[RMDB]
The record gives the reactivity of an RNA of 177 nucleotides to DMS. Conditions: 150 mM KOAc, 10 mM MgCl2 and 150 mM bicine (pH 8.5), 24 C. The data come from the RNA Mapping Database (RMDB), library TTRINS.

RNA sequence: GGGAACGACUCGAGUAGAGUCGAAAAGAUAUGGAAGUUCUUCGAAGACAUCCGGGUAGGGAGAACACGGUCGGAAACGACCGAGUUCGAGGAUCUAUUGGAUGUCUUCGAAGAACUUCCUAAGUCACAAAUAAAGUGACUUCGGUCACUUUAUUUGAAAAGAAACAACAACAACAAC
Reactivity to DMS in 0.01 (KOAc 150mM, MgCl2 10mM, bicine 150mM(pH8.5), 24C), signal-to-noise 2, nucleotides 027 to 126: g010a060u000a300u000g010g010a040a000g010u010u000c000u000u010c000g010a020a020g010a020c000a010u000c000c000g010g010g040u000a010g000g000g030a080g010a010a010c000a060c000g030g010u010c010g010g020a130a110a300c000g010a000c000c000g000a030g020u000u000c000g000a080g010g010a030u010c010u000a020u000u000g020g000a010u000g010u000c000u000u000c000g010a000a000g010a000a000c000u000u000c000c010u000a000a040g010u000c030a300